Chemical mapping of a 177-nucleotide RNA with DMS and 2A3. For DMS, 2,484 sequencing reads were counted. The RNA was probed in 150 mM KOAc, 10 mM MgCl2 and 150 mM bicine (pH 8.5) at 24 C. For 2A3, 1,238 sequencing reads were counted. Reactivities are given for positions 27 through 126.
RNA sequence: GGGAACGACUCGAGUAGAGUCGAAAAGGGGCCCUAUAACAGGGGGAGUGGGGUCGGCAGGACUCAGAUCCUUCCGGAGCCUCCAAACCUGCGGAUCUCAGGGUUCUGGUCUGGUCGGCGAGGCGGAGACCUCUAAGUGAUUCGUCACUUAGAGGUCAAAAGAAACAACAACAACAAC
Reactivity to DMS in 0.01 (KOAc 150mM, MgCl2 10mM, bicine 150mM(pH8.5), 24C), signal-to-noise 3, nucleotides 027 to 126: g010g000g010g010c020c010c030u000a100u000a130a090c150a100g000g010g010g000g000a150g020u000g010g000g020g030u010c020g020g000c030a050g000g000a010c020u020c170a090g010a130u000c000c000u010u000c010c020g010g010a110g030c030c000u000c080c120a050a120a110c170c000u000g010c130g000g000a070u010c100u000c150a060g020g000g000u000u010c010u010g020g010u000c020u000g000g010u010c050g000g000c030g020a140g010g010c150g010g020a250
Reactivity to 2A3 in 0.01 (KOAc 150mM, MgCl2 10mM, bicine 150mM(pH8.5), 24C), signal-to-noise 1, nucleotides 027 to 126: g000g000g020g010c000c000c030u080a110u050a110a100c090a030g060g000g050g000g000a070g020u190g000g060g000g000u070c000g040g010c010a000g040g020a000c020u040c220a010g010a190u000c010c000u000u050c000c010g070g050a010g040c010c000u000c040c040a040a060a060c020c000u070g100c050g050g000a060u060c090u070c150a030g000g090g000u070u050c010u050g000g010u070c020u010g040g010u040c000g010g000c040g000a020g030g100c060g020g020a020